[RMDB]
RNA sequence: GGGAACGACUCGAGUAGAGUCGAAAAUCUUGUAUUAUCCUGAUCGGUCCUGAAUUAGUGGUGCUCUACCUUAGAGAGGAACGAGUCAUAAGCUACUUCACUUUUGAGAUGGUUUUAAUGGUCUCGGAAGCCGUCAUAUGUUCGCAUAUGACGGCUUAAAAGAAACAACAACAACAAC
Reactivity to 2A3 in 0.01 (KOAc 150mM, MgCl2 10mM, bicine 150mM(pH8.5), 24C), signal-to-noise 2, nucleotides 027 to 126: u000c000u000u110g040u100a160u160u030a110u100c000c030u030g000a020u070c160g000g040u020c020c000u000g020a140a070u030u080a040g070u040g000g000u070g000c000u020c070u080a070c000c000u060u100a070g050a000g000a010g250g060a000a040c070g000a000g040u050c010a000u000a130a060g040c000u000a000c000u040u080c020a150c170u170u020u110u300g040a040g000a000u040g100g030u040u030u000u050a030a000u090g080g030u000c050u000c000g020g040
Reactivity to DMS in 0.01 (KOAc 150mM, MgCl2 10mM, bicine 150mM(pH8.5), 24C), signal-to-noise 1, nucleotides 027 to 126: u000c050u010u030g000u000a040u010u000a040u000c070c000u000g000a040u000c010g010g120u020c030c010u030g000a000a050u040u000a110g010u000g000g000u020g010c040u030c010u020a260c010c010u070u020a150g000a250g010a010g000g000a060a130c110g010a000g000u000c040a090u030a000a160g000c000u000a000c020u000u000c050a030c300u060u000u020u120g000a090g000a040u000g000g000u000u010u000u000a120a190u090g000g000u000c000u000c020g000g000